Conditions: 150 mM KOAc, 10 mM MgCl2 and 150 mM bicine (pH 8.5), 24 C. An RNA of 177 nucleotides, treated with DMS and 2A3 and read out base by base. It was measured as part of the RMDB libraries RFM100 and RFMREP. 2A3 adducts were read by reverse transcription with SuperScript II with manganese. DMS adducts were read by reverse transcription with MarathonRT. The 2A3 profile rests on 2,545 reads.

RNA sequence: GGGAACGACUCGAGUAGAGUCGAAAAUUUUAACCUGAGCAGUAGCUCGCAAAGCUGCCGCUCUUAUUUUGAAGAAAUGAGACCAGCAGGGGCAUCCGGGCUGGUACCCGGACUAUCUGCGUGAUCCAUGUUUUGGAUCAUUCGUGAUCCAAAACAUAAAAGAAACAACAACAACAAC
Reactivity to DMS in 0.01 (KOAc 150mM, MgCl2 10mM, bicine 150mM(pH8.5), 24C), signal-to-noise 3, nucleotides 027 to 126: u020u010u050u040a080a230c060c040u000g020a030g020c010a060g020u000a010g010c020u000c090g020c260a090a140a070g050c010u000g000c040c030g010c050u000c000u020u030a010u000u010u040u020g010a190a080g040a090a060a050u020g000a110g000a020c040c020a040g000c000a020g000g000g010g000c170a300u010c010c010g000g000g000c080u010g000g020u030a020c020c000c000g000g000a030c070u010a090u000c000u000g000c050g000u010g020a060u030c020c040
Reactivity to 2A3 in 0.01 (KOAc 150mM, MgCl2 10mM, bicine 150mM(pH8.5), 24C), signal-to-noise 3, nucleotides 027 to 126: u030u060u060u070a060a060c010c000u000g020a000g030c000a010g000u030a000g010c030u040c130g110c100a110a110a060g000c000u000g010c010c010g000c010u000c000u000u020a100u040u090u100u150g190a160a120g050a020a080a010u190g010a130g000a070c020c060a030g000c000a000g020g000g030g000c050a000u030c000c000g000g000g000c040u160g060g000u020a020c000c000c020g010g010a000c020u130a100u080c020u030g020c010g050u100g030a070u000c010c030